[RMDB]
Chemical mapping of a 177-nucleotide RNA with 2A3 and DMS. The reactions ran in a buffer of 150 mM KOAc, 10 mM MgCl2 and 150 mM bicine (pH 8.5), at 24 C. DMS adducts were read by reverse transcription with MarathonRT.
RNA sequence: GGGAACGACUCGAGUAGAGUCGAAAAGGGAGGUUGAGGUGGGAGGAUCGCUUGAGUCCGGGCAGUUGAGGCUGCAGUGAGCUGUGAUCACACCACUGUACUCCAGCCUGGGCAACAAAGCAAGAGCUGUAAGUGGAAGUUUCGACUUCCACUUACAAAAAGAAACAACAACAACAAC
Reactivity to 2A3 in 0.01 (KOAc 150mM, MgCl2 10mM, bicine 150mM(pH8.5), 24C), signal-to-noise 3, nucleotides 027 to 126: g050g010g040a200g050g000u190u170g080a070g050g220u300g140g020g090a020g000g060a130u180c080g020c000u000u040g010a000g020u010c000c000g010g000g020c030a020g050u160u170g030a010g020g060c250u070g000c050a020g030u010g030a140g000c170u000g020u060g090a270u270c070a010c000a000c020c010a000c000u010g000u010a020c000u040c010c010a000g000c010c000u030g000g030g000c000a010a010c020a020a170a000g060c010a040a020g020a000g100c110
Reactivity to DMS in 0.01 (KOAc 150mM, MgCl2 10mM, bicine 150mM(pH8.5), 24C), signal-to-noise 3, nucleotides 027 to 126: g030g010g010a150g000g010u020u010g000a060g000g000u000g000g050g010a060g020g000a030u000c090g040c000u010u000g000a120g010u000c010c000g020g000g000c030a080g010u000u020g000a020g030g010c260u000g020c030a020g000u000g000a100g030c150u000g040u000g010a170u010c180a050c030a040c000c000a010c000u000g020u000a060c020u000c020c080a260g000c010c000u000g010g020g000c000a010a040c070a140a090a020g020c030a080a120g000a090g020c210